[RMDB]
RNA sequence: GGGAACGACUCGAGUAGAGUCGAAAAGGAUUGAAAACAUGAACUCAGUAAUGGAUGAUAAUAAACUUCUUACGCUUGUAAAUAGCGAACGUAUAACCAUGCCAGUUCAAGUAUCGCUAUUGUUUGAGUCACGAUAAUCGUUCGCGAUUAUCGUGACAAAAGAAACAACAACAACAAC
Reactivity to 2A3 in 0.01 (KOAc 150mM, MgCl2 10mM, bicine 150mM(pH8.5), 24C), signal-to-noise 2, nucleotides 027 to 126: g030g030a050u070u110g110a080a040a030a010c030a070u050g020a020a000c050u000c090a010g030u130a140a130u040g100g000a110u050g050a070u100a210a070u190a040a190a000c050u110u000c010u070u080a060c010g020c030u000u050g090u140a060a070a120u090a030g030c000g010a030a000c040g020u070a050u040a190a000c000c050a020u070g000c030c000a030g000u010u030c010a040a020g050u040a130u070c020g020c140u000a040u080u130g080u040u090u040g010a020
Reactivity to DMS in 0.01 (KOAc 150mM, MgCl2 10mM, bicine 150mM(pH8.5), 24C), signal-to-noise 2, nucleotides 027 to 126: g030g040a050u010u000g000a130a080a090a060c100a100u000g030a050a060c000u030c090a050g010u000a050a000u000g000g000a100u020g030a040u000a010a070u000a120a080a090c080u000u020c090u010u000a100c030g000c100u000u010g000u010a020a050a060u020a050g030c000g000a030a040c130g010u000a050u030a050a100c070c050a080u000g000c060c180a020g010u000u000c050a050a110g000u000a040u000c040g000c060u000a050u000u000g010u000u000u000g000a160